[RMDB]
RNA sequence: GGGAACGACUCGAGUAGAGUCGAAAAUUAAAAAAGAAAAGAGAGAGAGAGAGAGAGAGACUGGUGACAAAAGGUGGCCCAGUGGAGAUUGUGCACCCAUUAGAAAUCUCGAGUGUAGGAGUAGGGUCAAAGAGAGAUGAUGGUUUGACCAGUCCAACAGUAAUUAGUGGUUCGCCACUAAUUACUGAAAAGAAACAACAACAACAAC
Reactivity to DMS in 0.01 (KOAc 150mM, MgCl2 10mM, bicine 150mM(pH8.5), 24C), signal-to-noise 2, nucleotides 027 to 156: u010u030a000a030a110a070a090a080g000a070a080a080a100g010a070g030a110g030a120g000a060g020a090g000a130g000a100g010a140g020a140g020a080c050u010g020g020u020g000a090c060a050a100a040a080g020g030u000g030g020c060c020c010a080g000u010g010g010a110g000a050u020u000g030u010g010c080a080c080c030c040a130u000u030a140g020a050a070a060u000c020u030c000g030a060g050u000g000u010a080g010g000a090g020u010a030g000g000g000u000c040a060a090a100g030a140g020a070g010a090u010g000a110u000g020g000u000u000u000g000a130c000c020a080g010u000c010c020a020a210
Reactivity to 2A3 in 0.01 (KOAc 150mM, MgCl2 10mM, bicine 150mM(pH8.5), 24C), signal-to-noise 2, nucleotides 027 to 156: u110u060a050a000a000a000a030a040g060a030a130a050a000g060a020g000a000g000a000g000a000g000a000g000a000g000a000g000a000g000a000g010a010c020u010g010g000u040g020a030c050a010a080a020a010g040g020u010g000g010c010c010c010a010g010u020g040g030a040g010a040u060u070g010u060g050c010a030c030c010c010a020u030u090a040g100a100a100a040u040c020u010c020g030a030g000u090g030u070a060g000g030a020g010u070a000g000g000g000u030c020a020a070a020g070a000g010a010g010a020u070g010a030u050g020g040u000u050u050g020a020c000c000a020g050u000c040c010a030a010